[RMDB]
An RNA of 177 nucleotides, treated with 2A3 and DMS and read out base by base.
Reactivities are given for positions 27 through 126.
The RNA was probed in 150 mM KOAc, 10 mM MgCl2 and 150 mM bicine (pH 8.5) at 24 C.

RNA sequence: GGGAACGACUCGAGUAGAGUCGAAAAGAUAUGGAGCUUCAUCGGGAUUGAUGACCUGCUUCGGAAACGAAGCAGCAAGAUUGCGAUGAGAGCUCCUAAGUCAAACCGCAGACUUCGGUCUGCGGAAGAAAGAACUAGUCUUCGGACUAGUUCUUUCAAAAGAAACAACAACAACAAC
Reactivity to 2A3 in 0.01 (KOAc 150mM, MgCl2 10mM, bicine 150mM(pH8.5), 24C), signal-to-noise 1, nucleotides 027 to 126: g020a010u070a080u180g000g000a020g000c000u020u000c020a000u010c000g180g140g000a060u070u120g120a160u060g040a080c030c010u000g000c000u020u010c000g020g000a060a060a040c020g000a000a020g040c000a000g000c000a080a090g040a070u070u300g280c070g000a010u030g080a210g080a010g140c000u000c000c000u000a050a000g000u000c040a060a030a100c000c020g000c010a010g000a020c000u030u280c300g090g000u000c020u000g000c000g000g020a010a010
Reactivity to DMS in 0.01 (KOAc 150mM, MgCl2 10mM, bicine 150mM(pH8.5), 24C), signal-to-noise 2, nucleotides 027 to 126: g000a060u000a300u020g000g000a020g010c000u000u000c010a020u000c010g010g000g010a020u010u000g000a120u020g020a050c300c020u020g010c000u000u000c000g000g000a090a090a190c010g010a000a010g000c000a010g020c050a050a100g010a010u000u010g000c000g010a010u000g000a040g000a020g000c000u010c000c010u000a000a050g010u000c050a080a130a180c010c000g000c000a000g000a030c000u000u020c220g080g000u000c000u000g010c010g000g000a010a050
The data come from the RNA Mapping Database (RMDB), library TTRDES. For DMS the reverse transcriptase was MarathonRT. For 2A3 the reverse transcriptase was SuperScript II with manganese. The DMS profile rests on 1,358 reads.